About this RNA:
This 177-nucleotide RNA was probed chemically with DMS and 2A3. Conditions: 150 mM KOAc, 10 mM MgCl2 and 150 mM bicine (pH 8.5), 24 C.
[RMDB]
RNA sequence: GGGAACGACUCGAGUAGAGUCGAAAAGGAGCUUUUUUUCGUACCUUCUUGACUUGAAAUUCUUGUUUAUUAUUAAAAAAUGAGCUAUAAUAAAGCAUAGCACUUAAUUUUAGAAAGAAGGUGUAAGCACGCGAUUAAUAUUCGUAUUAAUCGCGUGAAAAGAAACAACAACAACAAC
Reactivity to DMS in 0.01 (KOAc 150mM, MgCl2 10mM, bicine 150mM(pH8.5), 24C), signal-to-noise 2, nucleotides 027 to 126: g000g000a200g000c040u000u010u030u020u000u000u010c090g010u050a030c000c000u000u010c000u010u010g000a210c220u000u020g040a010a030a030u000u000c030u030u000g000u000u000u000a040u060u020a160u040u040a000a030a070a050a050a060u020g010a090g010c030u000a010u010a060a070u020a050a070a070g020c110a050u020a030g010c060a120c050u000u010a000a050u000u020u000u000a000g010a240a020a000g000a010a020g000g000u000g000u010a050a120g000
Reactivity to 2A3 in 0.01 (KOAc 150mM, MgCl2 10mM, bicine 150mM(pH8.5), 24C), signal-to-noise 5, nucleotides 027 to 126: g090g030a080g040c090u090u060u050u020u000u060u150c030g030u020a020c020c010u020u020c000u020u120g130a270c020u040u090g030a040a050a040u090u020c050u020u020g050u090u070u050a120u070u070a070u060u180a090a100a070a040a060a100u160g020a040g010c000u010a020u040a170a090u070a170a080a000g040c010a020u070a020g000c010a000c050u040u100a020a050u020u000u000u020a030g010a000a030a000g000a000a000g000g000u010g030u020a040a030g030